Notes:
An RNA of 177 nucleotides, treated with DMS and 2A3 and read out base by base. Conditions: 150 mM KOAc, 10 mM MgCl2 and 150 mM bicine (pH 8.5), 24 C. 2A3 adducts were read by reverse transcription with SuperScript II with manganese. For DMS the reverse transcriptase was MarathonRT. The data come from the RNA Mapping Database (RMDB), libraries RFM100 and RFMREP.
[RMDB]
RNA sequence: GGGAACGACUCGAGUAGAGUCGAAAAGCCAAAGACACCAUCACAAUCAGGCAGCCAGGAGCCAGGGCUUCCAUAGGCCCAGCUCUGUACCUGUAGGGGGAUGGAAUCUGCUAAAAGUGUUCUGGAGGUAUAUAAUUAAAUUCGUUUAAUUAUAUACAAAAGAAACAACAACAACAAC
Reactivity to DMS in 0.01 (KOAc 150mM, MgCl2 10mM, bicine 150mM(pH8.5), 24C), signal-to-noise 8, nucleotides 027 to 126: g000c030c030a070a080a060g000a070c200a150c000c000a010u000c000a050c020a150a120u020c010a010g000g000c140a100g020c190c220a120g000g010a010g010c000c040a100g010g000g010c000u000u010c260c190a140u040a060g010g010c000c000c010a270g000c000u000c000u000g000u020a080c030c000u000g010u010a070g020g020g000g010g010a000u000g000g010a110a150u010c040u010g000c120u020a070a110a110a090g000u020g010u000u010c010u000g000g010a300g010
Reactivity to 2A3 in 0.01 (KOAc 150mM, MgCl2 10mM, bicine 150mM(pH8.5), 24C), signal-to-noise 5, nucleotides 027 to 126: g030c010c000a060a060a020g040a030c050a040c050c000a010u010c000a000c010a090a150u110c010a010g060g000c030a010g130c090c040a060g050g030a010g000c010c050a120g010g000g000c000u120u070c110c050a140u200a160g040g000c000c000c000a000g010c010u000c000u020g010u040a030c000c000u010g010u070a070g070g110g020g070g000a000u020g010g020a020a090u020c030u080g040c020u070a060a070a070a100g120u140g040u060u010c000u010g040g020a050g300